[RMDB]
RNA sequence: GGGAACGACUCGAGUAGAGUCGAAAAUCGUGAGAUGUGGUGCCUCACGCGCUCGAGGCGUCCGUGGUCAGAGAGACCACUGACGCAAAAACUCGAGCGCAAAUAAACCGCAUUACAUCAAGAAUAAACGUCCUAUGGAGUUCGCUCCAUAGGACGUAAAAGAAACAACAACAACAAC
Reactivity to 2A3 in 0.01 (KOAc 150mM, MgCl2 10mM, bicine 150mM(pH8.5), 24C), signal-to-noise 2, nucleotides 027 to 126: u100c040g020u000g100a100g000a070u020g040u000g000g000u010g040c000c060u100c000a150c150g030c010g000c010u000c000g010a000g000g000c000g000u040c010c000g000u000g000g000u010c010a030g110a040g020a000g000a300c000c000a000c000u000g000a000c000g000c000a180a180a000a000a000c000u000c010g010a000g000c000g000c000a000a000a010u050a020a030a000c040c000g010c000a000u010u030a030c000a000u050c020a020a080g110a140a070u190a080a140
Reactivity to DMS in 0.01 (KOAc 150mM, MgCl2 10mM, bicine 150mM(pH8.5), 24C), signal-to-noise 1, nucleotides 027 to 126: u000c090g000u000g000a220g070a000u000g000u000g040g040u000g020c000c080u010c180a020c160g000c000g000c000u000c000g000a010g000g000c000g030u000c000c080g040u000g030g020u000c000a030g010a200g010a300g010a000c060c000a000c060u000g040a080c000g000c070a040a010a080a130a300c000u000c000g000a080g000c000g000c000a000a000a010u000a070a000a080c230c300g000c000a000u000u000a040c130a000u000c090a090a120g000a140a080u040a020a050